[RMDB]
RNA sequence: GGGAACGACUCGAGUAGAGUCGAAAAGUACGGGUUCACGGGAGUGCAGCACGGACUCCUGCCGUGCCUGCACGUUGCCGCGACGGUGACGACCAUCGGCCGCGAGAUGCUGCUCGCGACCCGCGAGCGGAUCAACGAAUUUCGAUUCGUUGAUCCGAAAAGAAACAACAACAACAAC
Reactivity to DMS in 0.01 (KOAc 150mM, MgCl2 10mM, bicine 150mM(pH8.5), 24C), signal-to-noise 7, nucleotides 027 to 126: g010u020a130c030g000g010g000u020u020c060a060c000g000g000g010a110g020u000g010c000a030g000c000a020c010g000g000a090c100u020c070c080u030g000c000c010g010u000g000c190c060u000g000c010a020c020g010u030u010g010c030c020g010c030g000a100c030g000g000u010g000a230c230g000a120c200c010a050u010c010g010g010c100c020g030c010g000a150g000a100u030g020c050u020g010c000u000c010g010c090g000a040c030c000c020g000c160g000a090g020
Reactivity to 2A3 in 0.01 (KOAc 150mM, MgCl2 10mM, bicine 150mM(pH8.5), 24C), signal-to-noise 9, nucleotides 027 to 126: g120u110a030c020g000g000g030u090u160c040a010c020g010g000g040a150g010u010g000c000a000g000c000a010c010g000g050a070c050u050c050c050u090g070c000c000g000u000g000c030c020u000g000c010a000c010g000u010u070g020c000c010g010c020g010a020c020g010g020u030g030a140c110g080a080c060c010a020u020c000g020g050c150c000g000c010g020a060g010a090u170g040c050u060g020c000u010c000g010c010g020a050c010c000c000g030c030g010a030g050